[RMDB]
RNA sequence: GGGAACGACUCGAGUAGAGUCGAAAACGGGUCAUGAUUGAUCUGCUGAACCGCCCAUGUCAACGGGUGGGGAAAAUUGAAAUCAAAAUCCCAGACUCUUUUAAUGGAACAACAUCUCAAGUCAGAGUCACAUCCGGGCCCGGAUUUAGCGCGCUAGCGAUCGGAGAAUAUUCGUAUUCUCCGAUCGAAAAGAAACAACAACAACAAC
Reactivity to 2A3 in 0.01 (KOAc 150mM, MgCl2 10mM, bicine 150mM(pH8.5), 24C), signal-to-noise 3, nucleotides 027 to 156: c010g020g000g000u000c020a050u050g040a060u020u040g010a030u020c020u100g000c000u050g040a060a030c020c000g000c010c000c020a120u220g180u210c050a100a020c120g010g010g000u030g000g000g000g040a010a050a050a080u100u120g020a070a050a050u120c030a040a060a030a130u050c010c000c010a020g030a080c010u060c000u070u160u060u210a120a070u140g040g020a080a030c040a070a060c030a190u080c030u060c140a040a140g110u080c020a040g030a020g090u050c010a020c020a050u020c030c040g000g030g010c000c000c020g000g000a030u070u050u080a060g010c070g010c020g040c180u090a020g040
Reactivity to DMS in 0.01 (KOAc 150mM, MgCl2 10mM, bicine 150mM(pH8.5), 24C), signal-to-noise 1, nucleotides 027 to 156: c000g030g070g030u010c000a120u030g030a140u000u000g040a250u000c040u000g010c020u010g020a150a250c010c000g010c000c000c000a140u020g090u010c170a120a140c160g010g020g040u020g030g000g020g030a100a120a050a180u000u000g000a110a120a090u000c030a090a080a070a080u030c000c030c010a090g000a050c040u000c030u030u000u010u000a100a090u010g010g000a090a100c020a120a170c030a300u010c030u000c120a030a130g000u010c050a110g000a030g040u000c010a010c040a070u000c060c070g100g030g000c000c030c000g000g000a160u010u000u000a060g000c000g000c080g010c020u020a160g020

The record gives the reactivity of an RNA of 207 nucleotides to 2A3 and DMS.
The 2A3 profile rests on 1,747 reads.
DMS adducts were read by reverse transcription with MarathonRT.
For DMS, 1,505 sequencing reads were counted.